[RMDB]
RNA sequence: GGGAACGACUCGAGUAGAGUCGAAAACGUACAAGUUUCGACUUGUACGAAAAAACCGUAGGUUUGCAUACUUCAACAGCUACACUUCGAAAGAGGUGUAGACAUGAAGAGUGCACGAACCUAAACGGAAAAACGCUAUGGUUUCGACCAUAGCGAAGUAGGUCCUACGAUUCGUCGUAGGACCUACAAAAGAAACAACAACAACAAC
Reactivity to 2A3 in 0.01 (KOAc 150mM, MgCl2 10mM, bicine 150mM(pH8.5), 24C), signal-to-noise 2, nucleotides 027 to 156: c000g000u000a010c000a000a000g070u010u060u300c200g100a100c030u000u000g010u020a000c000g040a020a000a000a000a000a000c000c000g020u000a010g000g000u000u020u040g000c030a020u060a240c010u010u000c010a060a070c010a170g040c000u000a000c000a000c010u000u010c000g100a110a090a030g000a000g000g000u000g000u000a000g000a020c000a060u070g020a000a000g080a050g000u010g010c000a010c060g030a000a000c000c000u040a150a190a020c030g000g020a040a030a030a030a000c010g000c010u000a010u000g030g030u050u120u150c300g090a040c010c020a010u010a000g000c000g020a030a000